Source information
Structure probing data (2A3 and DMS) for a 177-nucleotide construct. Reactivities are given for positions 27 through 126. The DMS profile rests on 13,422 reads.
[RMDB]
RNA sequence: GGGAACGACUCGAGUAGAGUCGAAAACGAAGAACAUGCCAAGCAGUAGGGAAGAAGAGAAAGUGACGGUCCCUGGAGAAGAAGCGCCGACUAACAACGUAACAGCAGACGCAGCAAGGCAUGAAAAGGUAUAUAGUGCUUUCGAGCACUAUAUACCAAAAGAAACAACAACAACAAC
Reactivity to 2A3 in 0.01 (KOAc 150mM, MgCl2 10mM, bicine 150mM(pH8.5), 24C), signal-to-noise 5, nucleotides 027 to 126: c020g070a040a070g070a070a030c010a010u010g000c010c000a030a030g020c020a040g040u160a040g050g010g000a070a050g070a110a000g040a050g080a050a100a050g130u130g080a030c010g010g000u010c000c010c030u040g050g040a120g030a130a030g050a040a000g020c020g010c020c010g020a020c030u080a090a030c090a060a040c080g140u170a030a020c020a020g060c000a010g020a060c030g000c030a030g010c010a070a020g000g000c000a000u020g000a000a010a000a020
Reactivity to DMS in 0.01 (KOAc 150mM, MgCl2 10mM, bicine 150mM(pH8.5), 24C), signal-to-noise 7, nucleotides 027 to 126: c070g010a120a090g020a090a170c010a000u000g010c000c010a040a300g000c020a110g010u020a040g000g010g010a030a060g020a060a080g010a080g000a080a090a100g010u000g030a110c070g010g000u000c020c020c010u010g000g010a100g000a110a120g000a100a090g010c020g000c030c010g010a080c060u020a100a080c240a070a100c190g000u010a050a090c120a070g020c180a050g010a100c050g010c030a080g000c010a030a290g000g000c010a010u010g000a040a060a080a070